Structure probing data (2A3 and DMS) for a 207-nucleotide construct. For 2A3 the reverse transcriptase was SuperScript II with manganese. High 2A3 reactivity points to a flexible backbone, as in loops and unpaired stretches.
RNA sequence: GGGAACGACUCGAGUAGAGUCGAAAAGUCAAACAAGAAGUGAUAAAGGAAUCCAAAGUUGAAGAGCCCAGGAAACGGGAAACUGUAUCCAUAAUGCUGACCAAAUAUGCAGCCUAUAACACCUUUCACCACUGUGAACAGUGCCGCCAGUACAUGACAGUAAAUCCGUAUUCGUACGGAUUUACUGAAAAGAAACAACAACAACAAC
Reactivity to 2A3 in 0.01 (KOAc 150mM, MgCl2 10mM, bicine 150mM(pH8.5), 24C), signal-to-noise 2, nucleotides 027 to 156: g000u000c010a020a050a110c030a130a010g020a060a010g070u070g040a010u120a140a070a010g000g030a050a010u070c050c030a090a040a060g010u020u040g060a080a050g020a030g070c010c020c050a050g060g080a080a100a060c070g030g010g000a060a010a010c010u030g010u080a060u040c000c020a020u070a090a060u120g010c040u010g010a060c020c050a060a110a030u140a060u140g010c030a000g000c000c000u060a080u030a100a050c060a070c040c020u050u080u010c070a060c100c010a060c070u090g030u030g100a090a020c010a030g020u010g050c020c010g000c000c010a000g020u040a020c070a150u110g060a030
Reactivity to DMS in 0.01 (KOAc 150mM, MgCl2 10mM, bicine 150mM(pH8.5), 24C), signal-to-noise 1, nucleotides 027 to 156: g020u040c040a050a020a140c070a060a080g020a070a100g010u000g030a050u000a050a100a100g030g010a090a140u010c050c030a070a150a150g010u000u010g000a170a060g010a180g010c020c030c030a140g000g010a050a120a050c090g010g010g040a100a050a130c020u000g000u010a110u000c010c070a120u000a000a080u000g030c010u000g010a120c070c010a040a090a070u000a060u010g000c020a060g000c030c090u000a050u000a070a080c040a000c010c030u000u020u010c030a020c000c060a060c100u050g020u000g000a070a020c060a050g000u010g000c070c030g000c030c020a040g000u000a050c030a050u010g020a250

Reactivities are rounded to 0.1 and cut off at 0 and 3. In probing experiments dimethyl sulfate is read out at A N1 and C N3, which are open when not base-paired.